[RMDB]
RNA sequence: GGGAACGACUCGAGUAGAGUCGAAAAGAUUUCUCGUUGUUGAGCGAGGUUUAAACAAAUCGACCACACAAACGUAGAGCCGACUACGGAUUUAUAAAUUAAGGCAUUAAGUGUGAUAAGGAGACAAAAAACGAUGUUGUGUUCGCACAACAUCGAACCAAUUGUAGGUCUUCGGACCUACAAUUGGAAAAGAAACAACAACAACAAC
Reactivity to DMS in 0.01 (KOAc 150mM, MgCl2 10mM, bicine 150mM(pH8.5), 24C), signal-to-noise 1, nucleotides 027 to 156: g010a170u010u010u000c010u010c000g050u000u000g000u000u000g000a090g010c040g000a120g010g000u000u010u010a060a070a140c060a060a050a150u000c010g020a130c030c000a050c050a210c090a090a090a110c030g010u000a030g000a250g040c010c010g010a090c000u000a050c020g000g010a300u000u010u000a010u010a030a030a140u000u000a020a030g000g010c030a250u000u020a090a190g010u000g000u000g000a100u010a050a190g000g020a140g000a090c030a000a020a080a070a070a170c040g010a030u000g040u000u000g060u000g020u010u020c270g010c000a040c010a000a010c020a000u020c020g010a020a090
Reactivity to 2A3 in 0.01 (KOAc 150mM, MgCl2 10mM, bicine 150mM(pH8.5), 24C), signal-to-noise 3, nucleotides 027 to 156: g100a030u110u130u020c020u010c000g000u000u030g010u010u010g000a000g000c010g000a010g050g040u100u200u070a060a070a020c110a010a010a010u000c000g000a000c000c010a010c010a010c000a030a170a000c010g000u000a000g000a000g000c000c030g040a020c010u000a000c000g010g000a000u000u300u010a140u120a080a030a010u120u100a010a020g000g000c000a000u140u190a110a050g000u010g000u010g030a010u040a070a030g180g010a100g020a020c100a100a120a000a040a010a000c000g000a010u000g000u000u000g000u000g000u020u050c170g050c030a000c000a010a000c000a000u000c000g000a000a010